[RMDB]
RNA sequence: GGGAACGACUCGAGUAGAGUCGAAAAGGAGUGCUACCGAAAGGUAGCACUCCAACAAAUCGGUGUAAAUGCAGCCCGUAUUACACCGUGCGGCACAGCGGAAACGCUGAUGUCGUAUAGAGGGCUAUGGCUUUUAAAAUUUCGAUUUUAAAAGCCAAAAAGAAACAACAACAACAAC
Reactivity to DMS in 0.01 (KOAc 150mM, MgCl2 10mM, bicine 150mM(pH8.5), 24C), signal-to-noise 2, nucleotides 027 to 126: g020g010a050g050u000g010c000u000a010c010c000g000a130a080a160g010g020u000a000g000c020a000c000u000c000c000a010a040c100a050a040a060u000c000g030g010u000g000u000a010a030a120u010g010c080a080g000c010c010c010g000u010a070u000u000a000c000a010c020c000g020u000g000c000g000g010c010a010c000a010g000c000g010g000a140a120a170c000g030c000u000g010a040u000g040u000c000g040u000a020u010a120g000a100g000g010g020c010u010a100